Chemical mapping of a 177-nucleotide RNA with 2A3 and DMS. It was measured as part of the RMDB library OK1LIB. The DMS profile rests on 1,836 reads. The 2A3 profile rests on 1,651 reads.
RNA sequence: GGGAACGACUCGAGUAGAGUCGAAAACGUGACCUGUCAGAGAGAAGGAAAGUCAAUUAGGAUUAUAACGUUAACAAACACAACAGUAUAAGGUUUAGUCUUAUGAUGCUCAUUUUGUCUGUUGCACACGAGUGGAUGGAUUCGUCCAUCCACUCGUAAAAGAAACAACAACAACAAC
Reactivity to 2A3 in 0.01 (KOAc 150mM, MgCl2 10mM, bicine 150mM(pH8.5), 24C), signal-to-noise 3, nucleotides 027 to 126: c110g050u040g090a160c010c010u020g040u230c030a020g020a000g040a040g010a080a070g050g000a120a040a000g020u030c040a010a140u070u050a100g010g000a030u000u100a070u100a150a030c080g000u000u110a070a090c090a100a210a010c090a000c020a070a240c060a070g030u020a050u070a190a020g110g030u010u110u000a010g000u000c030u020u000a010u090g100a070u070g000c000u040c060a080u000u160u000u050g010u000c090u010g020u030u110g030c130a070c010
Reactivity to DMS in 0.01 (KOAc 150mM, MgCl2 10mM, bicine 150mM(pH8.5), 24C), signal-to-noise 2, nucleotides 027 to 126: c080g000u030g000a030c030c020u000g000u000c080a060g020a010g000a050g060a030a020g000g000a020a090a140g060u030c030a260a030u010u010a010g000g030a030u010u000a030u050a050a060c060g010u000u000a010a010c100a040a040a210c140a040c300a060a080c140a100g020u000a030u000a000a060g000g010u000u030u000a070g000u000c000u000u000a040u060g010a030u040g000c170u000c000a060u010u000u000u010g000u030c090u000g000u000u000g030c070a110c140